This 177-nucleotide RNA was probed chemically with DMS and 2A3. It was measured as part of the RMDB library OK2TST. DMS adducts were read by reverse transcription with MarathonRT. Reactivities are rounded to 0.1 and cut off at 0 and 3. The RNA was probed in 150 mM KOAc, 10 mM MgCl2 and 150 mM bicine (pH 8.5) at 24 C.

RNA sequence: GGGAACGACUCGAGUAGAGUCGAAAACUUUGACUUUAACAGCAUCUACGAAAAGGUCAAGGAAAUCACCCUUGAGACUUUUGCUUUGGAUGACAGUGAAAGUGUUCAAGCUACCAUGUAUAAGAUAAUUUAUGGAGGAGUUCGCUCCUCCAUAAAUAAAAGAAACAACAACAACAAC
Reactivity to DMS in 0.01 (KOAc 150mM, MgCl2 10mM, bicine 150mM(pH8.5), 24C), signal-to-noise 4, nucleotides 027 to 126: c010u000u000u010g000a060c000u000u000u000a080a150c080a230g000c070a050u020c110u000a140c270g000a070a100a020a010g010g000u000c000a010a040g010g000a070a140a100u010c170a120c150c030c000u010u000g010a030g000a060c010u000u000u000u010g000c040u000u000u010g010g010a090u000g010a130c120a030g000u000g010a010a020a010g020u000g000u000u000c020a040a040g020c090u010a150c080c060a040u000g000u010a110u010a090a080g010a110u000a060
Reactivity to 2A3 in 0.01 (KOAc 150mM, MgCl2 10mM, bicine 150mM(pH8.5), 24C), signal-to-noise 1, nucleotides 027 to 126: c000u020u010u020g030a040c010u040u000u080a020a060c020a010g070c010a160u080c110u210a060c070g000a040a040a030a030g000g010u000c020a000a010g030g000a100a260a020u070c040a100c000c000c000u000u010g040a040g010a100c010u020u070u000u070g050c030u180u090u100g110g070a080u120g160a060c050a020g000u000g050a000a000a010g000u010g120u090u050c030a040a000g020c010u040a080c000c100a030u140g030u050a180u110a080a060g200a060u300a130